About this RNA: Source: RMDB library OK2TRN, as collected in RNAgym. The record gives the reactivity of an RNA of 177 nucleotides to DMS. High DMS reactivity at an A or C suggests that its Watson-Crick edge is free.

[RMDB]
RNA sequence: GGGAACGACUCGAGUAGAGUCGAAAAGCCGGAGCGCCAGCUUCGGUGGAGGCAUUGGUGGGAUACUACCCUGGCUGUAUUGAAAUUCUAACCCGCGCCCCUGAUCGGGGCGGGAGACAGUGUCAGGCUUUAGCCCUUCGUUCGCGAAGGGCUAAAGAAAAGAAACAACAACAACAAC
Reactivity to DMS in 0.01 (KOAc 150mM, MgCl2 10mM, bicine 150mM(pH8.5), 24C), signal-to-noise 2, nucleotides 027 to 126: g020c000c000g030g000a040g010c030g040c190c300a180g010c000u000u000c030g030g010u000g000g000a110g020g010c070a080u010u000g000g010u000g010g010g010a120u010a070c070u000a180c170c030c010u000g010g020c030u000g000u020a080u000u000g000a090a090a150u000u000c060u020a100a220c030c000c000g000c020g000c000c000c010c020u010g020a130u010c210g000g000g000g010c000g000g000g000a040g020a040c120a060g000u000g000u010c010a040g010g010